Structure probing data (2A3 and DMS) for a 207-nucleotide construct. Reactivities are given for positions 27 through 156. The DMS profile rests on 3,246 reads. The reactions ran in a buffer of 150 mM KOAc, 10 mM MgCl2 and 150 mM bicine (pH 8.5), at 24 C. Source: RMDB library OK3TST, as collected in RNAgym.

RNA sequence: GGGAACGACUCGAGUAGAGUCGAAAACGAAUACGGCAGCCAGUUGCCGGAGCUGAUCGAUGCUCCGUUCAACGACACCACCCGCCUGCAGGUCUAUGCCGCCACCGCCAUGGCCCUCAUGCGCUGGGAACCGCGCAUCCGCCUGAGCCGUGUCCAGGAUCAUUAAUAGGUUCGCCUAUUAAUGAUCAAAAGAAACAACAACAACAAC
Reactivity to 2A3 in 0.01 (KOAc 150mM, MgCl2 10mM, bicine 150mM(pH8.5), 24C), signal-to-noise 4, nucleotides 027 to 156: c030g040a060a040u150a050c040g020g000c030a030g060c090c070a060g020u040u010g020c020c010g000g000a000g010c010u110g080a280u240c140g050a090u180g010c010u020c000c000g030u120u160c020a020a010c020g030a020c010a020c020c040a020c000c000c010g070c030c010u050g020c030a020g000g060u030c030u060a030u060g020c050c040g020c050c010a050c010c010g000c000c030a030u060g020g000c070c020c030u120c020a020u030g010c040g000c130u110g000g000g090a070a050c050c020g020c010g010c020a020u020c030c040g010c010c020u020g010a010g040c000c000g040u030g030u060c040c030a070g000
Reactivity to DMS in 0.01 (KOAc 150mM, MgCl2 10mM, bicine 150mM(pH8.5), 24C), signal-to-noise 2, nucleotides 027 to 156: c040g010a090a110u000a090c060g080g170c020a190g020c040c070a130g000u000u010g000c300c060g020g000a040g050c000u010g000a210u020c110g000a190u010g030c030u000c010c000g000u010u020c020a030a060c010g010a040c010a080c060c030a120c010c010c040g000c060c000u000g060c060a030g000g030u010c040u020a100u010g020c000c020g030c030c090a080c090c040g040c070c020a070u000g020g020c020c030c020u000c000a050u000g020c110g010c010u030g040g000g010a060a130c040c080g000c190g020c010a100u000c040c020g030c030c000u000g000a100g040c020c020g050u010g010u020c010c010a170g000